About this RNA
Structure probing data (DMS) for a 177-nucleotide construct.
RNA sequence: GGGAACGACUCGAGUAGAGUCGAAAAAAAAUGCAAUUGUCCAUGCCUAGCCCCACCUCUAUGCGCUGUCGAUGGCACCAACGGAGUGGACCUGGUUGCCUAUAAACCGAUUAUUAGUAGCGCGUUAACGUGCCAUCUGAUUCGUCAGAUGGCACGUAAAAGAAACAACAACAACAAC
Reactivity to DMS in 0.01 (KOAc 150mM, MgCl2 10mM, bicine 150mM(pH8.5), 24C), signal-to-noise 2, nucleotides 027 to 126: a050a000a050a070u000g010c060a090a070u000u000g020u000c000c000a150u020g000c020c040u000a120g010c030c010c010c010a140c070c050u000c110u000a030u000g000c020g020c040u000g000u030c040g000a150u020g010g010c030a030c050c000a030a160c220g000g010a130g010u000g010g030a110c050c090u020g030g000u000u000g020c020c000u020a070u020a040a040a190c120c000g010a050u010u010a150u040u020a180g030u000a020g030c020g020c040g000u010u000a110